[RMDB]
RNA sequence: GGGAACGACUCGAGUAGAGUCGAAAAACCUGGGGGUGACAUACACCGGAAAACCGUAGAGAUACGGUCCCCCUUGUAGUCGGUGUACAGGUGGUGCAUGGCUGUCGUCAGCUAGUGUCGUGAGCUGAGUUUUUAUGUAAUUCGUUACAUAAAAACUAAAAGAAACAACAACAACAAC
Reactivity to 2A3 in 0.01 (KOAc 150mM, MgCl2 10mM, bicine 150mM(pH8.5), 24C), signal-to-noise 3, nucleotides 027 to 126: a000c010c010u010g010g000g010g000g010u050g020a000c000a020u120a020c000a010c010c000g030g020a050a090a000a000c000c000g000u000a000g020a000g000a050u020a000c000g000g010u020c000c000c000c000c000u000u080g040u020a000g010u020c000g000g000u010g000u010a050c040a020g020g060u060g010g010u050g000c030a030u060g050g000c020u020g060u130c040g050u080c000a000g000c000u100a070g090u040g040u140c040g110u160g110a040g000c080u030g030
Reactivity to DMS in 0.01 (KOAc 150mM, MgCl2 10mM, bicine 150mM(pH8.5), 24C), signal-to-noise 3, nucleotides 027 to 126: a070c000c000u000g010g000g010g020g010u000g020a090c110a140u010a030c020a040c030c020g020g000a060a060a110a050c010c000g010u000a030g000a210g020a190u000a000c000g000g000u000c000c010c000c000c020u040u030g000u020a040g010u020c010g010g010u010g000u030a020c090a060g000g030u010g000g010u000g000c070a070u000g010g010c020u010g000u030c090g000u030c070a140g000c190u010a230g000u050g000u000c280g000u070g000a220g000c110u000g000
Annotation: This 177-nucleotide RNA was probed chemically with 2A3 and DMS. The DMS profile rests on 7,694 reads. The reactions ran in a buffer of 150 mM KOAc, 10 mM MgCl2 and 150 mM bicine (pH 8.5), at 24 C. Values cover nucleotides 27 to 126.